[RMDB]
RNA sequence: GGGAACGACUCGAGUAGAGUCGAAAAUCGGGAAGCGGCCACCACCCAAUGUCCACGGCAGAAUCUUGAUGUCGAUUGAUUCGUUGCCCGCGUACUUCUGCCAGUCGGUACCGCCGUCGUACGUCGUCACCCAAAGCAUUUCGCUUUUCUGGUGGCGCAUGCCACCAAGCUUCGGCUUGGUGGCAUGAAAAGAAACAACAACAACAAC
Reactivity to DMS in 0.01 (KOAc 150mM, MgCl2 10mM, bicine 150mM(pH8.5), 24C), signal-to-noise 2, nucleotides 027 to 156: u000c030g030g000g010a090a060g010c000g040g010c020c060a070c020c010a130c150c040c050a110a090u010g010u010c020c000a110c080g010g050c000a060g010a040a060u000c050u000u000g030a100u000g030u010c080g010a170u000u010g000a130u000u010c030g020u010u000g020c040c030c020g000c030g040u000a050c020u000u000c030u000g030c010c010a090g010u000c050g030g020u010a060c030c050g040c040c030g040u000c060g000u000a030c060g010u000c010g020u010c020a030c000c000c140a030a050a020g030c010a300u010u020u000c120g010c010u000u010u000u010c050u000g020g040u000g020g020c000g010
The data come from the RNA Mapping Database (RMDB), library OK3TST. This 207-nucleotide RNA was probed chemically with DMS. For DMS, 6,013 sequencing reads were counted. For DMS the reverse transcriptase was MarathonRT. In probing experiments dimethyl sulfate is read out at A N1 and C N3, which are open when not base-paired. Conditions: 150 mM KOAc, 10 mM MgCl2 and 150 mM bicine (pH 8.5), 24 C.